Source information
The record gives the reactivity of an RNA of 207 nucleotides to 2A3 and DMS. The 2A3 profile rests on 5,924 reads.

RNA sequence: GGGAACGACUCGAGUAGAGUCGAAAACUUUCAAUCUAUCGUCUUCCAUUGCCUUUUUAAACGAUUUUGCCUCUACGCCCUGAGUAAUUGCAACCAUGUAUGCUUUAUGUGACUCAGAGAAACGCUCACAGUCAACGUAAUUGGCAAUCAGAUACUACGCUACUAAUAUCUUCGGAUAUUAGUAGCGAAAAGAAACAACAACAACAAC
Reactivity to 2A3 in 0.01 (KOAc 150mM, MgCl2 10mM, bicine 150mM(pH8.5), 24C), signal-to-noise 8, nucleotides 027 to 156: c020u110u180u120c080a120a110u030c040u170a120u120c050g060u020c040u090u010c040c020a050u030u060g020c020c020u090u050u030u090u230a110a180a050c060g040a100u070u060u060u090g030c010c000u020c010u030a040c040g020c020c000c010u010g010a010g010u050a090a070u120u080g030c000a020a040c050c060a090u190g070u150a100u060g120c010u060u090u080a130u140g100u090g060a010c000u010c050a010g050a010g010a060a110a020c090g020c030u020c020a060c020a020g020u040c000a020a040c040g020u020a050a070u030u030g010g000c000a000a010u040c020a030g010a050u050a070c050u050a030
Reactivity to DMS in 0.01 (KOAc 150mM, MgCl2 10mM, bicine 150mM(pH8.5), 24C), signal-to-noise 3, nucleotides 027 to 156: c020u010u000u000c070a080a150u020c070u000a070u000c030g020u010c030u010u000c030c010a160u010u000g000c010c010u000u000u000u000u000a050a100a140c060g000a250u020u000u010u000g000c020c010u010c040u010a060c050g000c000c050c010u000g010a090g020u000a030a110u000u000g000c020a090a120c040c030a080u030g030u010a070u000g010c060u000u000u000a080u010g040u010g000a050c010u000c040a130g020a140g000a060a090a120c100g010c020u010c150a120c060a070g010u010c010a080a050c030g020u000a050a160u010u000g020g030c020a040a070u010c030a080g010a170u000a070c020u010a200